[RMDB]
RNA sequence: GGGAACGACUCGAGUAGAGUCGAAAAAUCGUACAUCGACGACAUCUAGUGAUAUCUGAUCCGAUCAUGACACGCAGCUAGACUAGCAUGGUACCAUGCCAUGUAGAGACUCGAUCCGAUCAUCACAGAACCUUCCUACAUUCGUGUAGGAAGGUUCAAAAGAAACAACAACAACAAC
Reactivity to 2A3 in 0.01 (KOAc 150mM, MgCl2 10mM, bicine 150mM(pH8.5), 24C), signal-to-noise 4, nucleotides 027 to 126: a000u040c010g000u040a050c050a130u070c110g050a010c030g010a030c020a060u000c040u070a030g010u010g090a040u030a060u070c050u020g030a040u070c090c060g040a070u070c030a060u220g040a030c020a020c230g130c050a040g040c040u110a040g060a180c020u020a010g060c010a000u020g020g000u070a220c050c070a090u300g010c000c000a020u030g000u050a040g040a000g000a100c030u020c040g000a010u030c040c000g040a030u050c050a000u000c000a040c000a040
Reactivity to DMS in 0.01 (KOAc 150mM, MgCl2 10mM, bicine 150mM(pH8.5), 24C), signal-to-noise 3, nucleotides 027 to 126: a060u010c020g010u000a100c240a140u000c060g030a010c040g000a120c140a140u000c030u000a060g030u000g000a070u010a040u000c030u010g000a020u030c140c110g010a050u000c060a110u010g000a080c140a060c160g040c130a110g010c020u000a060g000a080c080u000a110g000c000a020u000g000g040u000a130c210c280a060u010g040c010c000a020u000g010u000a020g010a150g000a060c200u000c050g000a040u000c020c020g010a010u000c060a070u020c070a050c130a180